[RMDB]
RNA sequence: GGGAACGACUCGAGUAGAGUCGAAAAGGAAUCGACAGUAGAGUGUAUCAUGUCAGUAAGCAUGCCGGGGAAUGGUGGUUUACCCCGUUAUCAAAGGAUUACCGACCAAUAAUUGGCGAAACUCGUUAGGCCCGUCCACACUUCGGUGUGGACGGAAGUACAACGUAUAGUUCGCUAUACGUUGUACAAAAGAAACAACAACAACAAC
Reactivity to 2A3 in 0.01 (KOAc 150mM, MgCl2 10mM, bicine 150mM(pH8.5), 24C), signal-to-noise 9, nucleotides 027 to 156: g050g010a040a060u080c060g040a030c050a030g050u110a020g040a030g050u090g030u050a080u170c050a040u070g050u060c030a020g070u110a070a000g020c030a020u050g050c040c010g000g000g000g020a030a070u050g030g030u020g020g030u030u050u140a100c000c000c000c010g030u040u070a070u050c050a060a050a040g040g000a020u030u060a050c010c030g040a060c010c040a020a020u180a140a050u080u060g020g000c050g030a040a050a070c050u050c050g060u030u030a050g040g050c000c000c000g000u000c000c000a010c000a000c010u020u050c170g050g000u000g000u000g000g000a000c000g000g000a000a000
Reactivity to DMS in 0.01 (KOAc 150mM, MgCl2 10mM, bicine 150mM(pH8.5), 24C), signal-to-noise 4, nucleotides 027 to 156: g020g020a110a060u000c020g020a060c030a090g020u000a090g010a100g050u010g010u020a090u010c030a090u000g000u000c060a090g020u000a060a120g030c030a080u000g000c090c030g020g010g010g000a070a110u000g030g030u010g010g010u000u000u000a210c010c010c000c020g020u000u000a050u000c170a090a080a060g010g010a260u010u000a030c010c010g010a040c020c010a050a100u000a030a140u010u000g010g000c010g010a080a060a130c030u000c050g010u000u000a090g000g000c080c000c000g000u010c000c000a000c000a020c010u000u000c250g040g020u000g030u000g000g010a000c000g010g010a000a030

Structure probing data (2A3 and DMS) for a 207-nucleotide construct. The RNA was probed in 150 mM KOAc, 10 mM MgCl2 and 150 mM bicine (pH 8.5) at 24 C. DMS adducts were read by reverse transcription with MarathonRT.